Description: Conditions: 150 mM KOAc, 10 mM MgCl2 and 150 mM bicine (pH 8.5), 24 C. This 177-nucleotide RNA was probed chemically with DMS and 2A3.
RNA sequence: GGGAACGACUCGAGUAGAGUCGAAAAACGUGAUACUAGCGUACGGUACCAUGCGUACCAUGAUACUAGGCACAUGCAUGUCGCGUCACACGUCAUGGAUCACGUGAGCACAUGCGCUAGCAUGAUCCGUGUGAGCCAGUUUCGACUGGCUCACACGAAAAGAAACAACAACAACAAC
Reactivity to DMS in 0.01 (KOAc 150mM, MgCl2 10mM, bicine 150mM(pH8.5), 24C), signal-to-noise 2, nucleotides 027 to 126: a090c050g010u000g000a040u000a070c010u000a030g000c030g020u010a070c150g000g030u000a030c010c010a050u010g000c090g010u010a170c020c010a110u000g010a040u000a090c040u030a040g000g040c170a100c050a110u000g030c070a050u010g010u000c160g010c090g100u010c140a110c090a020c030g000u000c120a080u000g010g000a080u000c060a020c040g010u000g010a070g010c080a170c090a050u000g010c030g000c120u030a050g000c010a040u000g000a110u000c040
Reactivity to 2A3 in 0.01 (KOAc 150mM, MgCl2 10mM, bicine 150mM(pH8.5), 24C), signal-to-noise 3, nucleotides 027 to 126: a000c020g000u010g010a030u060a130c020u000a010g020c010g070u070a030c120g000g000u010a030c040c050a160u130g000c100g030u010a070c000c020a030u070g010a000u010a080c070u070a090g010g020c040a070c020a030u250g020c050a050u070g050u070c080g040c030g170u160c030a040c010a010c160g120u050c010a140u130g030g040a020u060c030a020c030g060u030g010a030g000c040a020c010a120u070g010c010g000c090u070a040g040c010a040u070g030a040u050c040

It was measured as part of the RMDB library OK2TRN.